Source: RMDB libraries RFM100 and RFMREP, as collected in RNAgym. Chemical mapping of a 177-nucleotide RNA with DMS and 2A3.
[RMDB]
RNA sequence: GGGAACGACUCGAGUAGAGUCGAAAAUAACUAGGUGCAGGAUGCUGAUUUGAGCCUCUCCCAAUUCUCUAAUAACCUCACUGGAGGUUAACCAGGCAGGGCUCAAUAUACCUCUUCAGCAGUAGCAAAUGUCUUUUGGAUUCGUCCAAAAGACAUUAAAAGAAACAACAACAACAAC
Reactivity to DMS in 0.01 (KOAc 150mM, MgCl2 10mM, bicine 150mM(pH8.5), 24C), signal-to-noise 8, nucleotides 027 to 126: u050a050a100c070u010a080g020g040u010g020c030a070g000g020a160u000g000c010u000g000a040u000u010u010g000a010g000c010c000u020c120u000c070c010c030a100a180u030u010c060u010c060u020a090a110u000a020a010c000c000u000c000a220c300u020g010g000a010g000g000u010u000a020a090c170c220a050g000g010c290a080g010g000g010c000u000c000a010a010u010a060u030a080c100c080u020c070u020u010c010a010g000c020a040g000u020a100g010c050a060
Reactivity to 2A3 in 0.01 (KOAc 150mM, MgCl2 10mM, bicine 150mM(pH8.5), 24C), signal-to-noise 6, nucleotides 027 to 126: u140a020a050c110u070a080g100g000u070g060c040a040g050g180a080u050g000c030u010g020a090u030u030u040g000a000g010c000c000u140c030u060c040c010c030a020a070u180u030c060u010c010u040a060a150u050a090a050c010c010u020c050a150c240u190g240g010a000g000g020u020u010a010a010c060c020a010g000g030c050a010g000g000g000c000u000c010a000a000u030a000u030a020c010c040u090c030u070u020c010a000g000c000a030g040u100a010g020c030a040
Notes:
Values cover nucleotides 27 to 126.